RNA sequence: GGGAACGACUCGAGUAGAGUCGAAAAGCCAGGCUUAUGAUACCAUUUCUUUCCGUAUUUACUUGCCAUGUACAGGCACAGUUCUAGGCUCUGGAAAGGAAAGGAGGACACUUGGUCACUGCCCUCAUCGUUCUGAUUUCUUCGGAAAUCAGAACGAAAAAGAAACAACAACAACAAC
Reactivity to 2A3 in 0.01 (KOAc 150mM, MgCl2 10mM, bicine 150mM(pH8.5), 24C), signal-to-noise 2, nucleotides 027 to 126: g000c000c010a000g040g020c060u250u160a090u200g020a040u050a060c000c000a020u000u040u000c010u020u010u000c000c020g040u050a100u050u150u040a050c040u020u010g030c000c000a110u230g100u190a080c070a160g010g000c030a040c120a030g030u090u050c070u080a050g090g000c040u000c110u110g010g000a020a000a030g020g010a020a000a000g040g010a030g020g050a000c010a000c050u000u020g010g040u050c070a020c140u010g000c000c000c010u000c020a050
Reactivity to DMS in 0.01 (KOAc 150mM, MgCl2 10mM, bicine 150mM(pH8.5), 24C), signal-to-noise 2, nucleotides 027 to 126: g000c010c030a020g000g010c110u000u000a060u010g010a300u010a090c040c030a070u000u000u000c010u000u020u000c000c000g020u000a110u020u010u010a040c040u000u020g000c040c000a080u020g010u010a140c240a060g000g020c000a000c170a010g020u000u000c140u000a060g040g020c160u010c060u000g050g020a020a010a050g000g000a000a040a090g020g010a020g000g010a120c250a060c000u000u000g000g000u000c140a100c230u000g010c010c000c010u000c090a080
Description
This 177-nucleotide RNA was probed chemically with 2A3 and DMS. The DMS profile rests on 1,017 reads. As a SHAPE reagent, 2A3 marks flexible, mostly unpaired nucleotides at the ribose 2'-OH. The RNA was probed in 150 mM KOAc, 10 mM MgCl2 and 150 mM bicine (pH 8.5) at 24 C. It was measured as part of the RMDB library OK2TST.